Description: The record gives the reactivity of an RNA of 177 nucleotides to DMS and 2A3. 2A3 adducts were read by reverse transcription with SuperScript II with manganese. The reactions ran in a buffer of 150 mM KOAc, 10 mM MgCl2 and 150 mM bicine (pH 8.5), at 24 C.
RNA sequence: GGGAACGACUCGAGUAGAGUCGAAAAGGUGCGAUACAGGAUUUGGCGCUGUAAAUUGCUCAGAUCCAAUUGGUCAUCGUCAGCCAGUAAUAAUUUGCCGAUACCAGCGGCCGCCAAAUAGAGCGCACAAGUGCGCUUCUUUCGAGAAGCGCACUUGAAAAGAAACAACAACAACAAC
Reactivity to DMS in 0.01 (KOAc 150mM, MgCl2 10mM, bicine 150mM(pH8.5), 24C), signal-to-noise 3, nucleotides 027 to 126: g020g040u000g020c020g000a070u000a090c130a140g030g000a040u000u000u000g000g030c060g000c010u000g000u020a070a120a110u010u010g010c100u000c140a070g010a080u010c110c030a060a110u000u000g000g000u000c120a030u000c020g010u000c040a070g020c100c080a120g020u000a060a090u000a060a140u010u010u000g010c050c000g000a050u000a060c050c030a100g010c020g010g000c110c080g030c020c020a040a030a030u000a070g000a110g030c030g010c070a110
Reactivity to 2A3 in 0.01 (KOAc 150mM, MgCl2 10mM, bicine 150mM(pH8.5), 24C), signal-to-noise 2, nucleotides 027 to 126: g000g000u040g040c000g000a020u050a240c110a100g080g060a070u030u000u010g020g000c130g000c050u020g040u080a040a140a200u170u120g000c010u010c100a040g000a090u010c030c030a040a050u100u090g030g010u070c060a000u020c000g060u020c040a000g010c060c020a030g090u100a060a180u110a130a090u010u090u050g010c010c000g010a030u030a050c010c010a010g030c040g060g030c100c040g000c030c010a030a040a010u110a080g050a020g030c030g000c000a010

It was measured as part of the RMDB library OK2TST.
For DMS the reverse transcriptase was MarathonRT.